[RMDB]
RNA sequence: GGGAACGACUCGAGUAGAGUCGAAAAUUGAGCUUUUACCAGAAAAACAUGGGCAAUAUGGUCUAGCCUUACACCUCAUUGAAGCUGUGGAAGCCAUAUCUCUUCCUUCUUUAUGACACUUACCUACUGGAAAUAGUCUAAAAUUAUGAUUAUAACACACCUCCUAGUACUUCGGUACUAGGAGGUGAAAAGAAACAACAACAACAAC
Reactivity to 2A3 in 0.01 (KOAc 150mM, MgCl2 10mM, bicine 150mM(pH8.5), 24C), signal-to-noise 2, nucleotides 027 to 156: u010u030g040a030g010c000u010u050u080u080a110c120c050a080g110a030a150a000a010a010c020a040u100g000g020g000c010a040a140u020a040u220g000g020u000c090u100a050g060c020c000u010u020a020c020a060c040c000u060c000a060u050u210g040a030a000g050c050u050g010u120g040g000a010a000g020c000c020a010u000a060u140c050u000c000u100u000c020c000u020u090c050u030u160u030a110u100g020a000c010a050c090u000u090a100c010c010u070a100c040u050g000g040a070a120a050u030a060g020u000c060u140a020a100a170a150u160u120a030u230g030a030u070u160a080u070a140a010c080a000
Annotation
This 207-nucleotide RNA was probed chemically with 2A3. The reactions ran in a buffer of 150 mM KOAc, 10 mM MgCl2 and 150 mM bicine (pH 8.5), at 24 C. Values cover nucleotides 27 to 156. The data come from the RNA Mapping Database (RMDB), library OK3TST. 2A3 adducts were read by reverse transcription with SuperScript II with manganese.